[RMDB]
RNA sequence: GGGAACGACUCGAGUAGAGUCGAAAAUUCGAGAACUUUGACUUUUUCAGCAAUGGAAAGCCAAAUGAAGUUUCAGUAUAUAAAGCAACAAAUUCCUUUAACUCAGUAUGUCUCGGAAUUAAGGCAAAUGCUUCGAUUAAUUCGUUAAUCGAAGCAUAAAAGAAACAACAACAACAAC
Reactivity to DMS in 0.01 (KOAc 150mM, MgCl2 10mM, bicine 150mM(pH8.5), 24C), signal-to-noise 3, nucleotides 027 to 126: u010u000c010g000a060g010a090a120c080u010u000u000g010a040c010u000u000u000u000u000c010a020g000c300a070a170u000g000g000a000a020a010g010c020c000a010a020a070u010g000a140a070g010u000u000u000c040a060g010u010a080u020a120u000a050a070a130g000c050a050a060c100a050a060a090u000u000c060c000u000u000u000a030a040c070u000c090a070g000u000a090u000g010u000c030u000c090g010g000a030a050u000u010a060a070g000g000c100a040a100
Reactivity to 2A3 in 0.01 (KOAc 150mM, MgCl2 10mM, bicine 150mM(pH8.5), 24C), signal-to-noise 2, nucleotides 027 to 126: u060u020c010g000a020g000a060a010c050u010u000u000g010a000c000u000u100u020u190u220c010a020g020c060a070a110u020g000g010a040a000a020g000c000c000a010a050a070u150g030a090a040g030u020u030u100c050a000g030u010a040u010a010u060a150a130a070g070c020a000a070c010a080a140a100u020u060c000c000u090u050u130a040a040c040u040c040a040g040u090a130u170g060u040c020u030c020g000g030a030a040u130u060a110a070g100g020c030a000a000

Record summary
The record gives the reactivity of an RNA of 177 nucleotides to DMS and 2A3. It was measured as part of the RMDB library OK2TRN. For DMS, 2,458 sequencing reads were counted.